[RMDB]
RNA sequence: GGGAACGACUCGAGUAGAGUCGAAAAUCUCAGGUAGUUCUUUAUAGCAAUAUGAGAAUGAACUAAUAGAAAGGGCUCUGCCUUCCUAAUAACUUACUGAUUGUAAUUUCCUGAUCUUAGACCUACAGGCCACCUUUUCCUUACUCUUUAGUUCAACCCCCAUACCUCCAUUCGUGGAGGUAUGGGGAAAAGAAACAACAACAACAAC
Reactivity to 2A3 in 0.01 (KOAc 150mM, MgCl2 10mM, bicine 150mM(pH8.5), 24C), signal-to-noise 1, nucleotides 027 to 156: u060c010u000c000a020g060g020u090a040g030u070u030c000u040u080u180a070u100a030g030c070a130a100u090a080u210g030a100g020a140a080u080g020a020a010c020u020a020a110u130a120g120a080a080a030g010g020g040c070u030c030u190g000c000c000u060u070c000c000u050a100a070u170a070a040c030u050u170a030c000u030g060a180u180u040g020u180a000a110u090u020u050c000c000u000g020a020u030c000u000u100a040g030a070c000c000u070a080c100a000g020g010c000c000a120c000c030u050u000u000u000c010c000u020u080a060c040u050c060u140u130u040a040g010u000u010c000a000a050c000